Chemical mapping of a 177-nucleotide RNA with 2A3. Source: RMDB library OK1LIB, as collected in RNAgym. The reactions ran in a buffer of 150 mM KOAc, 10 mM MgCl2 and 150 mM bicine (pH 8.5), at 24 C. For 2A3 the reverse transcriptase was SuperScript II with manganese.
[RMDB]
RNA sequence: GGGAACGACUCGAGUAGAGUCGAAAAUGCAGGAUGGAUACAGCUUUAUGUGGAAAAUGCUCAAGAGGCAUUCGACACUGUGCUUCAAGCAUAUAGAAUUGCAGAGCAUGAAGAGGUCAUGCUUCCAGCGGUGACGGCUGUUCGCAGCCGUCACCGCAAAAGAAACAACAACAACAAC
Reactivity to 2A3 in 0.01 (KOAc 150mM, MgCl2 10mM, bicine 150mM(pH8.5), 24C), signal-to-noise 1, nucleotides 027 to 126: u100g010c000a000g070g000a060u040g000g020a010u000a050c060a070g000c010u010u240u000a190u010g040u020g020g100a020a120a000a000u110g000c000u000c100a170a060g110a110g070g000c000a000u030u020c000g030a000c010a000c090u050g000u050g000c000u040u020c040a140a200g000c110a050u050a000u060a040g300a230a110u000u040g010c010a010g000a000g000c000a000u000g050a030a060g110a000g250g000u000c000a000u060g000c000u100u040c000c000a000